An RNA of 177 nucleotides, treated with DMS and read out base by base.
DMS adducts were read by reverse transcription with MarathonRT.

[RMDB]
RNA sequence: GGGAACGACUCGAGUAGAGUCGAAAAGAAGGGGAAAGAGGCAAAACGGAAGAGAAGGGGGGGCCUCCCGAUCCGAGGGGCCCAACCACCAAGUUUGGAGAGCACUCCGGGCCGAAGGGUUGAGUAGGUGUAAAAUGAACUUCGGUUCAUUUUACACAAAAGAAACAACAACAACAAC
Reactivity to DMS in 0.01 (KOAc 150mM, MgCl2 10mM, bicine 150mM(pH8.5), 24C), signal-to-noise 1, nucleotides 027 to 126: g010a070a080g010g000g010g000a030a010a040g030a050g010g020c020a030a000a020a090c080g000g010a090a050g020a100g000a160a110g020g000g000g040g090g000g000c010c010u000c010c010c020g000a080u020c140c060g010a070g020g020g010g030c010c000c010a000a020c040c050a080c150c070a100a140g000u000u000u000g020g000a030g010a260g030c210a050c080u000c050c020g020g000g030c000c000g010a090a110g010g000g000u020u040g000a060g000u020a030g000
The DMS profile rests on 651 reads. The RNA was probed in 150 mM KOAc, 10 mM MgCl2 and 150 mM bicine (pH 8.5) at 24 C.